[RMDB]
RNA sequence: GGGAACGACUCGAGUAGAGUCGAAAACUGGAGGUGGCUUGGGGAAGAGUCAUGUGAUCCUGCAAACGGUGAGAUGUGAGGGGUGGACCUAGGUGACUUGAUGGACAGGGAGGCAGUGACGGAGGCAGGACCAUGAGGCUGGUUUCCGCAGCAUUGACUCAUGGGAGUAGUUCGCUACUCCCAUGAGAAAAGAAACAACAACAACAAC
Reactivity to 2A3 in 0.01 (KOAc 150mM, MgCl2 10mM, bicine 150mM(pH8.5), 24C), signal-to-noise 1, nucleotides 027 to 156: c090u080g010g000a100g030g030u050g040g010c040u110u100g030g010g110g000a000a000g010a030g050u070c070a080u140g030u060g100a170u100c000c000u030g030c120a020a020a270c190g060g100u110g000a050g040a120u180g080u180g050a130g000g020g050g180u050g080g050a070c020c020u080a100g010g010u070g020a070c040u070u020g000a070u080g080g000a040c070a120g050g000g040a030g010g000c010a030g020u000g010a010c000g000g000a000g000g000c000a000g000g020a030c040c030a000u010g060a070g060g000c080u100g010g000u010u020u000c000c000g030c000a020g030c000a050u070u130g010a020
Chemical mapping of a 207-nucleotide RNA with 2A3.
2A3 adducts were read by reverse transcription with SuperScript II with manganese.
The 2A3 profile rests on 428 reads.